The record gives the reactivity of an RNA of 207 nucleotides to DMS and 2A3. The DMS profile rests on 4,001 reads. The 2A3 profile rests on 2,694 reads. Reactivities are given for positions 27 through 156.

RNA sequence: GGGAACGACUCGAGUAGAGUCGAAAACAUACCGAGUAGACGAACAUGACAGAGAUUACCAACACCGUGAUGAGACUCGCCGUCAAUGUGCACCGUACCCGCCCUCUGGGUACUUGCGGAGGUUCUUCGAUUAUAGCAACGUCAUCCGCCUCGAAGGCUCUCAGGAGAAAUUCGUUUCUCCUGAGAGAAAAGAAACAACAACAACAAC
Reactivity to DMS in 0.01 (KOAc 150mM, MgCl2 10mM, bicine 150mM(pH8.5), 24C), signal-to-noise 2, nucleotides 027 to 156: c040a150u010a110c030c020g010a090g030u000a090g030a100c010g020a090a100c020a100u000g020a120c060a080g010a160g010a230u000u010a110c080c050a020a150c050a080c060c050g050u020g020a090u000g000a140g030a110c040u000c020g030c020c040g020u000c030a070a110u010g010u010g010c040a050c020c010g020u000a050c000c000c020g010c040c080c040u000c080u000g010g010g010u000a030c030u000u010g010c040g030g020a140g040g030u010u000c030u000u000c010g020a120u010u000a070u000a070g040c040a050a060c050g000u000c040a100u000c020c020g000c010c030u000c040g000a070a090g020g020
Reactivity to 2A3 in 0.01 (KOAc 150mM, MgCl2 10mM, bicine 150mM(pH8.5), 24C), signal-to-noise 4, nucleotides 027 to 156: c060a030u140a040c010c050g030a020g020u100a070g040a060c020g020a090a020c030a070u080g060a010c050a060g060a030g020a140u070u140a060c040c030a060a040c030a050c060c060g080u090g050a110u090g010a020g040a070c000u000c030g000c030c020g040u050c030a080a080u110g030u090g040c020a010c050c030g000u010a000c010c000c010g090c040c030c010u090c080u030g010g000g000u010a020c010u010u100g010c000g000g000a030g000g030u030u030c000u060u060c030g070a070u080u100a080u130a110g060c050a050a050c040g050u020c030a060u020c020c020g020c000c010u060c030g050a040a020g040g000